Chemical mapping of a 207-nucleotide RNA with 2A3 and DMS. Source: RMDB library OK3TST, as collected in RNAgym. For DMS the reverse transcriptase was MarathonRT. High 2A3 reactivity points to a flexible backbone, as in loops and unpaired stretches. Reactivities are given for positions 27 through 156. For DMS, 2,046 sequencing reads were counted. The reactions ran in a buffer of 150 mM KOAc, 10 mM MgCl2 and 150 mM bicine (pH 8.5), at 24 C.
RNA sequence: GGGAACGACUCGAGUAGAGUCGAAAAUCGAUAGGUUCACGCUGAAUGGUUUUGAAGUCGCCCAUCAAUUCCUUUUCACGUUUGCACCAAAUGGAAUCAUCCCAAAACGCCGUAUGGUUUGACUUCUCCAUAGUGAUACAAAUGUAAUCCCUAUCGCUCGAUUUAUGCUGUUCGCAGCAUAAAUCGAAAAAGAAACAACAACAACAAC
Reactivity to 2A3 in 0.01 (KOAc 150mM, MgCl2 10mM, bicine 150mM(pH8.5), 24C), signal-to-noise 4, nucleotides 027 to 156: u090c010g010a010u010a030g000g040u070u110c040a020c060g040c090u130g100a130a080u050g020g050u050u160u140u260g010a020a030g020u060c010g020c010c020c020a060u060c030a030a110u050u120c020c000u040u060u060u140c090a030c130g050u040u090u090g070c090a060c020c030a070a100a100u040g020g010a030a030u070c030a060u040c060c000c000a060a100a030a050c100g070c100c040g090u200a020u060g020g070u040u040u150g010a030c000u010u010c000u030c020c000a020u030a050g010u010g030a050u080a170c050a060a180a010u160g040u110a060a050u080c010c000c010u020a020u020c020g010c030
Reactivity to DMS in 0.01 (KOAc 150mM, MgCl2 10mM, bicine 150mM(pH8.5), 24C), signal-to-noise 1, nucleotides 027 to 156: u000c040g030a030u000a020g000g040u000u000c040a030c040g060c140u030g020a090a100u010g010g010u000u000u010u020g020a050a070g060u000c040g000c260c030c020a240u010c040a030a080u000u000c040c050u000u000u010u020c090a070c080g060u000u000u010g020c030a030c050c070a120a070a120u010g000g000a050a080u010c050a090u010c040c000c010a060a080a120a120c130g060c060c080g000u000a130u000g000g040u070u000u000g010a090c060u000u010c000u010c000c000a090u000a140g000u000g030a090u000a070c060a020a040a080u010g000u000a040a070u010c030c020c010u020a030u020c020g060c200